[RMDB]
RNA sequence: GGGAACGACUCGAGUAGAGUCGAAAAGUGACACUGUUCGCAGUGUCACAAAGUGGUGGAUCUAGAACCACAAAAACUAGAUCAAAGAUCUAGUCUAGAUCAAAAGCAUACAGUUCGCUGUAUGCAAGCUUAUGUUUGACUUCGGUCAAACAUAAGCAAAAGAAACAACAACAACAAC
Reactivity to 2A3 in 0.01 (KOAc 150mM, MgCl2 10mM, bicine 150mM(pH8.5), 24C), signal-to-noise 2, nucleotides 027 to 126: g000u000g000a000c000a000c010u010g020u060u080c180g020c100a000g010u010g000u020c000a000c000a000a030a000g010u020g000g000u000g020g000a010u000c010u000a020g010a030a030c040c000a010c010a030a230a010a020a010c000u000a000g010a010u010c070a150a270a030g020a000u000c000u000a010g020u020c010u010a010g000a020u030c010a000a000a060a050g010c000a000u000a000c000a000g000u040u060c130g070c100u000g000u000a000u000g000c010a020a010
Reactivity to DMS in 0.01 (KOAc 150mM, MgCl2 10mM, bicine 150mM(pH8.5), 24C), signal-to-noise 2, nucleotides 027 to 126: g010u000g000a010c000a000c000u000g020u000u020c150g050c010a000g010u000g010u000c000a000c000a040a080a040g010u000g020g010u000g010g020a020u000c000u000a000g000a030a020c030c000a060c020a040a050a070a060a150c000u000a020g000a010u000c040a110a210a240g010a050u000c000u000a010g000u000c000u000a030g000a030u000c050a050a120a090a140g010c010a000u020a000c000a030g010u000u000c230g020c000u000g010u010a000u000g000c030a040a030